[RMDB]
RNA sequence: GGGAACGACUCGAGUAGAGUCGAAAAACAUAUUACGAUAUGAUUCAGAUGGUGUCUUACUGGUUCGUACCAAGGGACAUAAUGGUUUCUUGUUUCCAACCAAAGAACAAGUGGCGAGCUUGAAUAAAAAACUGACUGCCGUUCGCGGCAGUCAGAAGAAGACUAUGUGGUUCGCCACAUAGUCUUCAAAAGAAACAACAACAACAAC
Reactivity to 2A3 in 0.01 (KOAc 150mM, MgCl2 10mM, bicine 150mM(pH8.5), 24C), signal-to-noise 3, nucleotides 027 to 156: a000c010a030u120a030u130u180a040c070g070a050u050a010u140g100a110u120u140c090a070g120a180u140g120g030u050g030u050c030u020u070a120c040u060g030g020u030u120c080g060u140a020c020c000a050a040g000g010g000a010c020a020u150a030a100u090g050g000u000u000u020c000u000u000g010u010u010u000c020c010a040a030c010c020a060a070a000g020a020a010c000a020a020g010u030g070g070c060g010a030g020c030u090u100g070a070a030u170a150a080a030a010a010a040c000u000g000a010c000u000g010c040c000g020u050u070c240g010c020g130g000c010a000g000u010c000a000g000a000a000
Reactivity to DMS in 0.01 (KOAc 150mM, MgCl2 10mM, bicine 150mM(pH8.5), 24C), signal-to-noise 1, nucleotides 027 to 156: a070c040a060u020a090u020u020a130c070g040a140u010a100u010g020a130u000u010c020a160g010a110u010g020g000u030g010u000c040u000u000a120c100u000g030g030u030u000c160g000u010a120c060c040a050a100g010g030g000a040c070a100u000a090a130u010g010g000u000u010u000c010u010u000g000u000u010u000c010c010a110a120c090c070a040a040a120g010a110a130c070a000a120g010u000g010g030c050g020a200g010c000u000u010g020a070a120u030a000a090a100a040a130a190c030u000g020a060c010u000g000c100c020g050u000u000c300g040c080g070g060c000a010g040u030c000a000g010a000a050
The record gives the reactivity of an RNA of 207 nucleotides to 2A3 and DMS. For 2A3 the reverse transcriptase was SuperScript II with manganese. The RNA was probed in 150 mM KOAc, 10 mM MgCl2 and 150 mM bicine (pH 8.5) at 24 C. For DMS, 1,416 sequencing reads were counted.